[RMDB]
RNA sequence: GGGAACGACUCGAGUAGAGUCGAAAACACGAAGGGCGCUUGCAGCAACACCAUCUUGCAUUUGCGCCAAGCAAACACUAGCAACGUCCAAUCGACCGGAGGCAACGCACAUCUUUGCGAGGCUCUGUAGCCCUAAAUAUUUCGAUAUUUAGGGCUAAAAAGAAACAACAACAACAAC
Reactivity to 2A3 in 0.01 (KOAc 150mM, MgCl2 10mM, bicine 150mM(pH8.5), 24C), signal-to-noise 6, nucleotides 027 to 126: c060a010c040g050a050a070g030g010g010c010g020c150u010u020g010c030a040g010c020a040a040c020a040c130c040a110u090c040u040u050g000c010a070u020u010u090g010c030g010c040c020a010a000g010c000a010a020a030c030a020c140u100a030g000c020a010a020c020g010u000c020c000a020a140u040c030g060a070c020c030g000g040a020g060g030c020a070a030c020g030c010a030c000a150u080c110u050u060u020g000c020g020a030g040g020c010u010c020u060g130
Reactivity to DMS in 0.01 (KOAc 150mM, MgCl2 10mM, bicine 150mM(pH8.5), 24C), signal-to-noise 9, nucleotides 027 to 126: c080a140c090g020a100a160g010g010g010c020g010c150u000u000g020c040a110g010c070a050a060c140a080c180c160a080u010c090u000u000g010c030a240u010u000u000g010c030g010c100c160a060a090g000c050a030a030a030c170a100c170u000a080g010c030a030a040c050g000u000c010c030a080a080u010c050g010a130c090c030g000g000a050g010g010c040a040a080c050g000c040a040c250a100u010c130u010u010u000g010c020g010a150g010g000c010u000c040u000g010
Chemical mapping of a 177-nucleotide RNA with 2A3 and DMS.
High 2A3 reactivity points to a flexible backbone, as in loops and unpaired stretches.
The DMS profile rests on 19,569 reads.
Values cover nucleotides 27 to 126.
2A3 adducts were read by reverse transcription with SuperScript II with manganese.
For 2A3, 15,707 sequencing reads were counted.